[RMDB]
RNA sequence: GGGAACGACUCGAGUAGAGUCGAAAAGAUAUGGAAUCUCAUGUAGGAUCUAGACAGGUUAUCGGAAACGAUAACCCGAAUCCUCACAUGAGGAUUCCUAAGUCAAACUCUCACUUCGGUGAGAGAAGACUUUGUUGUAGUUCGCUACAACAAAGUCAAAAGAAACAACAACAACAAC
Reactivity to 2A3 in 0.01 (KOAc 150mM, MgCl2 10mM, bicine 150mM(pH8.5), 24C), signal-to-noise 1, nucleotides 027 to 126: g050a040u140a050u180g020g000a000a010u000c010u000c000a010u000g000u010a000g000g000a020u020c070u170a100g160a260c160a140g000g000u000u000a010u000c010g000g000a090a040a030c000g000a030u010a000a000c050c000c000g000a020a040u000c000c000u020c050a000c020a010u030g020a130g090g030a010u000u000c000c000u010a120a000g050u000c020a060a100a240c000u000c000u000c020a010c030u060u100c300g180g010u010g010a000g000a000g000a040a020
Reactivity to DMS in 0.01 (KOAc 150mM, MgCl2 10mM, bicine 150mM(pH8.5), 24C), signal-to-noise 2, nucleotides 027 to 126: g010a030u010a300u000g000g020a030a010u000c000u000c000a010u000g010u000a020g020g000a030u000c260u000a150g010a170c300a130g000g000u020u000a020u000c000g000g000a150a100a260c010g030a000u000a010a010c010c020c040g000a060a080u000c000c000u010c300a010c010a000u000g020a040g010g030a020u000u010c000c010u010a030a120g000u000c030a200a130a190c010u000c000u000c010a020c000u010u010c250g010g040u000g000a010g010a000g020a090a150
Annotation: This 177-nucleotide RNA was probed chemically with 2A3 and DMS. The data come from the RNA Mapping Database (RMDB), library TTRDES. Conditions: 150 mM KOAc, 10 mM MgCl2 and 150 mM bicine (pH 8.5), 24 C.